Chemical mapping of a 177-nucleotide RNA with DMS and 2A3.
For DMS, 3,118 sequencing reads were counted.
The RNA was probed in 150 mM KOAc, 10 mM MgCl2 and 150 mM bicine (pH 8.5) at 24 C.
The 2A3 profile rests on 2,715 reads.

RNA sequence: GGGAACGACUCGAGUAGAGUCGAAAAGCGCGCGCAACUGCUGCACUACAUGCGCAGCGCACCGGAUUUCUAUUUCGACGAAAUGUCGCAGAUCCUGAUGGAUCGCUGGUCGCGGGGCAGGGUAGCGGUUGGCACUACUAUUCGUAGUAGUGCCAACAAAAGAAACAACAACAACAAC
Reactivity to DMS in 0.01 (KOAc 150mM, MgCl2 10mM, bicine 150mM(pH8.5), 24C), signal-to-noise 3, nucleotides 027 to 126: g000c060g010c090g020c070g020c030a040a090c090u000g000c010u020g020c060a060c040u000a090c130a150u000g000c010g000c000a090g030c000g020c080a050c040c040g010g000a060u000u010u000c100u010a100u000u010u000c040g010a030c080g010a100a060a160u010g000u010c020g010c240a100g000a020u000c010c000u010g000a180u020g030g000a030u010c010g010c060u000g010g000u000c040g010c100g000g000g000g000c040a010g000g000g000u000a050g010c030g010
Reactivity to 2A3 in 0.01 (KOAc 150mM, MgCl2 10mM, bicine 150mM(pH8.5), 24C), signal-to-noise 3, nucleotides 027 to 126: g010c040g000c010g000c010g010c030a110a030c090u120g030c040u090g000c080a040c050u130a030c030a060u070g020c050g000c060a030g000c020g010c020a010c000c000g000g020a070u090u220u010c050u090a140u100u190u140c060g020a020c020g040a130a210a250u300g010u070c010g000c030a030g000a020u000c000c010u150g150a150u200g060g020a020u040c020g000c000u070g080g020u080c020g030c040g030g030g000g000c020a010g030g050g000u030a010g010c060g030